[RMDB]
RNA sequence: GGGAACGACUCGAGUAGAGUCGAAAACUGGCGCGUUUUCUGCCAAAUACCAAAAUUUUGACGUUGUGCGGUGGUCAACCGUUCGGUAUGCAGCGUGAUUCGUUGCAACAUGCGCCGCAUAUUAUCAUCAUACGAGUGCGUUCGCGCACUCGUAUGAAAAAGAAACAACAACAACAAC
Reactivity to 2A3 in 0.01 (KOAc 150mM, MgCl2 10mM, bicine 150mM(pH8.5), 24C), signal-to-noise 1, nucleotides 027 to 126: c030u010g000g000c070g000c030g000u000u000u110u090c070u040g060c020c000a020a050a000u100a080c040c000a000a030a100a160u030u130u130u020g030a030c100g050u080u110g000u040g000c000g030g040u030g060g120u080c050a080a030c080c000g170u280u080c080g000g000u030a070u050g050c020a030g000c020g040u060g170a230u210u020c000g010u010u060g010c030a050a020c080a050u200g010c000g040c000c020g020c010a000u000a030u000u070a030u060c000a020
Reactivity to DMS in 0.01 (KOAc 150mM, MgCl2 10mM, bicine 150mM(pH8.5), 24C), signal-to-noise 2, nucleotides 027 to 126: c220u010g000g020c020g000c170g030u010u000u020u000c070u000g000c010c000a030a090a080u000a300c050c060a010a050a080a170u000u000u000u000g030a040c120g000u010u000g010u000g030c040g000g020u010g010g010u020c070a030a020c070c040g000u000u000c210g040g030u000a110u010g010c000a000g050c000g000u000g040a260u010u000c040g030u010u000g000c020a030a080c150a060u010g010c020g010c000c000g000c020a020u000a010u020u000a070u010c110a130